[RMDB]
RNA sequence: GGGAACGACUCGAGUAGAGUCGAAAACGCCAGUGGCAGGUGCUAGGUACGUUAUGUGCUGAGUCGCAAGCUAUAAGCGCACAUGCGAUGCGCGUCGCUGGUCGGGACAGAAUCCGGCAACCUGGCCUCUACGCAGGGGCUUCGGUCCUUGUGUAGAAAAAGAAACAACAACAACAAC
Reactivity to DMS in 0.01 (KOAc 150mM, MgCl2 10mM, bicine 150mM(pH8.5), 24C), signal-to-noise 2, nucleotides 027 to 126: c080g000c020c010a020g010u000g010g010c010a040g010g000u000g020c030u010a300g000g030u110a200c190g000u110u140a220u140g000u000g000c000u000g000a300g000u040c260g000c100a110a070g010c030u000a100u040a090a110g000c010g000c020a020c040a100u020g000c110g000a080u010g000c020g000c010g010u000c080g000c010u000g000g000u000c050g000g000g010a100c130a070g000a120a130u040c010c010g000g000c040a070a050c030c000u000g000g000c000c020
Reactivity to 2A3 in 0.01 (KOAc 150mM, MgCl2 10mM, bicine 150mM(pH8.5), 24C), signal-to-noise 4, nucleotides 027 to 126: c030g030c010c000a030g050u060g020g010c020a020g040g030u020g000c020u080a130g010g050u060a020c040g030u110u270a110u170g020u000g000c000u020g030a020g060u050c030g000c060a020a000g010c000u030a020u010a080a020g020c020g000c000a010c000a020u100g030c040g040a060u010g010c000g000c000g030u010c020g000c010u020g030g000u030c040g030g010g010a010c010a040g050a030a030u050c000c000g000g010c010a010a020c000c000u010g050g000c000c000